Chemical mapping of a 177-nucleotide RNA with 2A3. Source: RMDB library OK1LIB, as collected in RNAgym. 2A3 adducts were read by reverse transcription with SuperScript II with manganese.

[RMDB]
RNA sequence: GGGAACGACUCGAGUAGAGUCGAAAAUCCCAAAGCGGAUUUAGCUCGGUUGGGAGAGCCCCAGACCGAAGAUCUGGGCGUCCUGUGUUCGAUCCACAGAAUUCGCACCAUAAACAACGGGAGAUUCACCGGGAGGAUGAUUCGUCAUCCUCCCGGUAAAAGAAACAACAACAACAAC
Reactivity to 2A3 in 0.01 (KOAc 150mM, MgCl2 10mM, bicine 150mM(pH8.5), 24C), signal-to-noise 1, nucleotides 027 to 126: u000c000c000c000a030a000a000g000c050g030g000a000u000u000u150a040g030c010u000c000g230g000u150u170g020g020g000a120g010a040g020c010c000c000c010a000g030a000c000c170g210a140a100g040a100u000c000u030g000g000g000c080g060u040c000c010u000g010u000g000u000u020c010g000a040u040c020c000a000c000a010g000a000a050u040u000c020g000c000a130c020c000a050u080a010a300a000c030a070a050c000g010g060g000a090g000a200u270u210c010